[RMDB]
RNA sequence: GGGAACGACUCGAGUAGAGUCGAAAAGAACAGACUGCCGCACUGGCUGCCCUGAUGAGAACAUACCCGUGACUAGCGUCGAAACAUCAACAGUGCGGGCUGUUGGUGUCGGAAGCCACUAAAAGAACAUAGCUACCCAGUUCGCUGGGUAGCUAUGAAAAGAAACAACAACAACAAC
Reactivity to DMS in 0.01 (KOAc 150mM, MgCl2 10mM, bicine 150mM(pH8.5), 24C), signal-to-noise 3, nucleotides 027 to 126: g010a110a090c060a040g010a010c030u020g010c020c020g000c060a040c030u000g010g030c020u000g000c010c030c000u010g010a040u010g000a200g000a080a020c060a010u050a130c130c150c010g000u000g000a100c130u020a140g010c060g000u000c010g010a100a040a020c010a020u010c010a000a040c060a020g000u010g010c080g020g010g010c020u010g000u000u030g020g010u000g000u000c060g000g010a100a070g030c030c090a020c040u000a030a040a040a100g000a170a130
Reactivity to 2A3 in 0.01 (KOAc 150mM, MgCl2 10mM, bicine 150mM(pH8.5), 24C), signal-to-noise 3, nucleotides 027 to 126: g020a120a000c000a030g050a020c020u050g020c020c000g040c000a030c050u040g030g020c040u030g050c020c000c000u050g040a050u020g030a070g010a020a020c010a030u080a080c000c000c000g030u020g030a170c210u130a030g000c000g030u020c020g080a120a000a000c000a000u030c000a040a010c010a060g050u040g080c070g000g110g010c040u060g000u070u020g000g020u070g030u120c040g090g020a060a010g030c040c010a090c030u100a050a070a000a000g020a040a000

Conditions: 150 mM KOAc, 10 mM MgCl2 and 150 mM bicine (pH 8.5), 24 C. Chemical mapping of a 177-nucleotide RNA with DMS and 2A3. The 2A3 profile rests on 1,903 reads.